[RMDB]
RNA sequence: GGGAACGACUCGAGUAGAGUCGAAAAGAGGAUUGAGUGGUGCCUUUGAGACAAGAGAAAGGGAUUAGGGUGGGUGCGUGAUUCUUUUCAACAGGAAGAAUCUUUCUUUGAGGUACCUGCUGGAAGCUGGUUGAACUGCAUUCGUGCAGUUCAACCAAAAAGAAACAACAACAACAAC
Reactivity to DMS in 0.01 (KOAc 150mM, MgCl2 10mM, bicine 150mM(pH8.5), 24C), signal-to-noise 1, nucleotides 027 to 126: g000a180g010g000a120u000u010g000a130g020u000g030g000u000g000c060c010u020u010u000g000a100g000a090c290a110a070g000a100g000a040a120a100g020g010g000a180u000u000a030g010g010g000u000g000g000g020u010g050c190g000u000g010a030u010u000c010u000u010u000u030c040a050a140c300a060g000g000a030a040g010a010a030u000c000u000u000u000c040u000u030u000g010a080g030g000u010a000c000c020u000g000c040u000g010g000a120a100g020c190